[RMDB]
Source: RMDB library RFMREP, as collected in RNAgym.
The record gives the reactivity of an RNA of 177 nucleotides to 2A3 and DMS.
The RNA was probed in 150 mM KOAc, 10 mM MgCl2 and 150 mM bicine (pH 8.5) at 24 C.
RNA sequence: GGGAACGACUCGAGUAGAGUCGAAAACAGUCCUAUAGUACGUAUCACCAGGACGUCAAACAAACUAGACCCUGGCUAACCCACCGCGAUGAUGAUCAGUGCGGCCUAGUCCUGAGCGUGAAGCAGGCCUAAAAAGCAGGUUCGCCUGCUUUUUAGGAAAAGAAACAACAACAACAAC
Reactivity to 2A3 in 0.01 (KOAc 150mM, MgCl2 10mM, bicine 150mM(pH8.5), 24C), signal-to-noise 1, nucleotides 027 to 126: c010a060g020u010c000c000u060a050u050a150g030u020a040c070g020u080a040u170c030a040c110c030a010g010g090a020c060g000u040c020a040a120a150c040a110a150a020c010u010a030g070a020c010c000c000u000g010g070c000u020a090a090c000c030c040a030c040c000g020c040g020a060u070g000a010u040g000a010u040c020a010g030u030g110c040g000g020c030c040u030a040g030u060c040c000u040g010a040g040c060g020u020g020a030a000g000c040a010g030g000
Reactivity to DMS in 0.01 (KOAc 150mM, MgCl2 10mM, bicine 150mM(pH8.5), 24C), signal-to-noise 2, nucleotides 027 to 126: c220a170g020u000c000c010u000a050u000a070g000u000a070c130g000u000a080u010c060a150c040c070a030g020g000a110c110g010u000c050a050a100a270c110a040a090a080c140u020a070g000a060c100c030c040u000g000g000c070u020a050a110c010c040c040a110c060c070g000c070g000a080u000g010a110u010g000a140u010c050a090g000u000g020c100g000g020c050c030u000a070g010u010c030c000u000g010a060g030c070g050u000g000a030a140g010c080a030g010g000